Source: RMDB library RFM100, as collected in RNAgym. This 177-nucleotide RNA was probed chemically with 2A3. The reactions ran in a buffer of 150 mM KOAc, 10 mM MgCl2 and 150 mM bicine (pH 8.5), at 24 C.
RNA sequence: GGGAACGACUCGAGUAGAGUCGAAAAACUGAUCGCCGAUACGUCGGCGAUCAGAUGUGGUUAUUUUGGUAUAGUAGCUCUAGACUCUAUUAUAGUUUCCUGAGCUGCUGUACCAAAAUACCACAAAGAGUAGACGAAACUUCGGUUUCGUCUACUCAAAAGAAACAACAACAACAAC
Reactivity to 2A3 in 0.01 (KOAc 150mM, MgCl2 10mM, bicine 150mM(pH8.5), 24C), signal-to-noise 1, nucleotides 027 to 126: a000c000u000g010a000u000c000g050c010c000g020a000u040a000c240g090u010c020g030g000c000g020a000u010c000a000g000a000u030g020u000g000g050u240u060a000u000u000u000u000g010g000u000a060u000a000g010u000a000g020c000u000c000u010a000g000a010c000u000c000u030a130u240u100a090u180a100g000u000u010u010c010c020u030g000a000g020c000u000g040c010u000g030u000a010c000c000a000a000a000a000u000a000c000c000a000c000a000a010a000